Record summary
Chemical mapping of a 177-nucleotide RNA with DMS and 2A3. For 2A3, 3,553 sequencing reads were counted. 2A3 adducts were read by reverse transcription with SuperScript II with manganese. It was measured as part of the RMDB library OK2TST. For DMS the reverse transcriptase was MarathonRT.
RNA sequence: GGGAACGACUCGAGUAGAGUCGAAAACAGAGCCACGAGAUCAUCGAUAUUGUCGAAUGCCCGGUCACGGUGCCGGAAAUCAUCGCGCGUCUGGAUGACCUGCGCGAAGUGGGCGCCUUGCUUGCGAGCUAUCCUGGUAGUUCGCUACCAGGAUAGCAAAAGAAACAACAACAACAAC
Reactivity to DMS in 0.01 (KOAc 150mM, MgCl2 10mM, bicine 150mM(pH8.5), 24C), signal-to-noise 3, nucleotides 027 to 126: c080a100g010a100g010c030c040a070c020g000a070g010a050u010c030a060u000c070g010a080u020a070u010u000g030u010c040g020a060a100u000g010c150c000c010g000g020u000c050a120c120g000g000u010g010c000c010g000g010a060a070a080u000c070a180u000c000g010c030g020c040g000u000c010u000g020g010a160u020g000a040c040c150u010g010c010g010c010g010a010a040g030u000g030g000g000c000g030c010c020u000u000g010c080u010u010g010c070g000a130
Reactivity to 2A3 in 0.01 (KOAc 150mM, MgCl2 10mM, bicine 150mM(pH8.5), 24C), signal-to-noise 3, nucleotides 027 to 126: c030a010g050a020g060c020c010a050c040g040a040g010a120u060c040a020u020c050g040a020u050a100u110u230g060u040c040g010a100a020u100g020c000c000c000g010g020u070c040a040c140g080g000u050g020c000c010g070g020a010a110a060u150c040a010u030c010g000c000g000c010g030u000c020u070g200g100a130u240g050a080c010c090u090g000c000g010c000g020a020a010g050u070g020g020g000c000g000c000c000u010u030g010c010u030u040g060c030g050a040